[RMDB]
RNA sequence: GGGAACGACUCGAGUAGAGUCGAAAAAAAAAGAUAUGGACGAGUCACCAUUCGCAUCGAUCUAUGAUAGCUGUCGGAAACGACCGAAGCAUAGGGAGCGAAUGCAAGUCUCGUCCUAAGUCAAAAAGACAAGUAGUAUCUUCGGAUACUACUUGUCAAAAGAAACAACAACAACAAC
Reactivity to 2A3 in 0.01 (KOAc 150mM, MgCl2 10mM, bicine 150mM(pH8.5), 24C), signal-to-noise 2, nucleotides 027 to 126: a000a000a000a000a000g060a010u060a020u130g010g000a000c000g020a010g050u040c020a060c150c000a030u000u040c000g000c040a180u280c100g060a040u010c020u020a010u010g040a030u020a070g120c210u050g040u030c020g000g000a050a080a090c010g000a000c030c020g060a150a040g080c000a000u010a000g000g040g010a020g000c000g020a010a000u000g020c010a300a240g020u010c000u010c010g020u000c000c000u010a010a000g030u000c030a110a000a000a150a070
Reactivity to DMS in 0.01 (KOAc 150mM, MgCl2 10mM, bicine 150mM(pH8.5), 24C), signal-to-noise 3, nucleotides 027 to 126: a010a080a050a150a020g010a010u000a300u010g020g000a000c000g010a010g000u010c020a180c300c000a010u000u000c000g010c000a240u010c110g010a060u050c000u020a020u000g000a030u000a040g000c180u000g000u000c000g010g000a060a040a150c030g010a000c010c020g000a050a080g000c020a010u000a000g010g020g000a010g030c000g000a010a000u000g010c110a050a060g010u000c000u000c000g010u000c000c000u000a000a060g010u030c010a080a130a100a050a080
Background
Structure probing data (2A3 and DMS) for a 177-nucleotide construct. Values cover nucleotides 27 to 126. DMS adducts were read by reverse transcription with MarathonRT. 2A3 adducts were read by reverse transcription with SuperScript II with manganese. The reactions ran in a buffer of 150 mM KOAc, 10 mM MgCl2 and 150 mM bicine (pH 8.5), at 24 C. It was measured as part of the RMDB library TTRDEL. The DMS profile rests on 1,926 reads.